Structure probing data (DMS and 2A3) for a 177-nucleotide construct. Values cover nucleotides 27 to 126. It was measured as part of the RMDB library OK2TST. For DMS the reverse transcriptase was MarathonRT. The 2A3 profile rests on 2,458 reads. For 2A3 the reverse transcriptase was SuperScript II with manganese.
[RMDB]
RNA sequence: GGGAACGACUCGAGUAGAGUCGAAAAGCCGUGAGGCCGGCCUGGUCAAGGAAGCACUGCACGCCUACCGUGGAAUGCGCAGGAUGGGGUUCCGACCAAGCAACGCGGAGUGGCGGGAAAUGAUAUCAGACAUGUAUGUGUUCGCACAUACAUGUCUAAAAGAAACAACAACAACAAC
Reactivity to DMS in 0.01 (KOAc 150mM, MgCl2 10mM, bicine 150mM(pH8.5), 24C), signal-to-noise 4, nucleotides 027 to 126: g030c020c010g000u000g000a150g000g000c030c060g010g000c040c030u000g000g000u000c050a060a100g010g000a140a090g010c060a100c060u010g020c030a100c040g010c010c010u000a170c070c090g020u000g020g000a080a070u000g020c030g010c140a160g000g000a120u000g030g000g020g010u010u010c020c020g000a070c050c030a110a220g000c030a040a110c060g000c030g000g000a210g010u010g010g030c020g000g000g010a060a070a080u010g000a120u000a050u010c160
Reactivity to 2A3 in 0.01 (KOAc 150mM, MgCl2 10mM, bicine 150mM(pH8.5), 24C), signal-to-noise 2, nucleotides 027 to 126: g000c000c010g070u020g020a030g000g040c000c000g050g070c000c000u010g000g020u030c020a020a030g030g010a070a040g080c040a030c080u100g000c030a020c100g020c020c000u070a100c050c010g000u080g000g060a260a130u080g000c020g000c090a060g000g100a060u130g070g000g010g100u140u100c020c000g030a030c030c000a000a000g030c010a050a140c040g010c000g030g020a090g050u080g000g020c000g000g000g010a040a090a030u150g050a040u070a050u240c060
The RNA was probed in 150 mM KOAc, 10 mM MgCl2 and 150 mM bicine (pH 8.5) at 24 C.